Source: RMDB library M2RFPK, as collected in RNAgym. The record gives the reactivity of an RNA of 207 nucleotides to DMS and 2A3. For 2A3 the reverse transcriptase was SuperScript II with manganese. Values cover nucleotides 27 to 156. The reactions ran in a buffer of 150 mM KOAc, 10 mM MgCl2 and 150 mM bicine (pH 8.5), at 24 C.
[RMDB]
RNA sequence: GGGAACGACUCGAGUAGAGUCGAAAAUGGACUUUUUACAGUUCCUACUUAUCCGGUUUUAACGCUGUUUUAUUGGCGCAAAGGUUUACGGAUAAACAACUAAUAAUUGAACCUUUUGUGUGCGAAAAUUGGACGUUUAGGUUCGCCUAAACGUCAACAUCCAUUCAGAGUUCGCUCUGAAUGGAUGAAAAGAAACAACAACAACAAC
Reactivity to DMS in 0.01 (KOAc 150mM, MgCl2 10mM, bicine 150mM(pH8.5), 24C), signal-to-noise 1, nucleotides 027 to 156: u000g000g000a120c060u000u010u000u020u000a120c100a190g010u000u000c000c020u000a100c120u000u010a030u000c000c000g010g050u000u000u000u000a110a070c030g040c000u010g060u000u050u000u000a120u040u000g020g000c020g020c020a030a080a050g030g000u000u000u000a110c030g030g010a050u000a010a020a150c060a030a160c090u010a140a120u000a070a180u000u010g010a050a040c010c000u000u000u000u000g030u000g030u000g020c020g010a100a060a060a160u010u000g100g010a000c010g010u000u000u000a010g000g000u000u010c300g000c020c000u000a000a010a010c000g000u000c000a010a040
Reactivity to 2A3 in 0.01 (KOAc 150mM, MgCl2 10mM, bicine 150mM(pH8.5), 24C), signal-to-noise 3, nucleotides 027 to 156: u080g030g020a040c040u070u050u050u090u210a090c170a050g010u070u060c030c020u010a070c030u040u040a010u020c000c000g050g000u020u000u050u080a040a040c050g020c050u030g130u150u100u130u130a110u160u240g070g000c010g000c050a020a010a000g070g000u000u050u050a030c020g000g000a000u050a040a050a010c040a030a010c050u200a050a140u130a150a050u130u130g060a000a000c000c000u040u070u040u090g080u020g030u050g060c090g060a070a030a100a120u090u110g100g010a000c000g000u000u010u000a000g020g010u000u050c130g110c000c000u010a000a000a030c010g000u000c000a000a000
DMS adducts were read by reverse transcription with MarathonRT.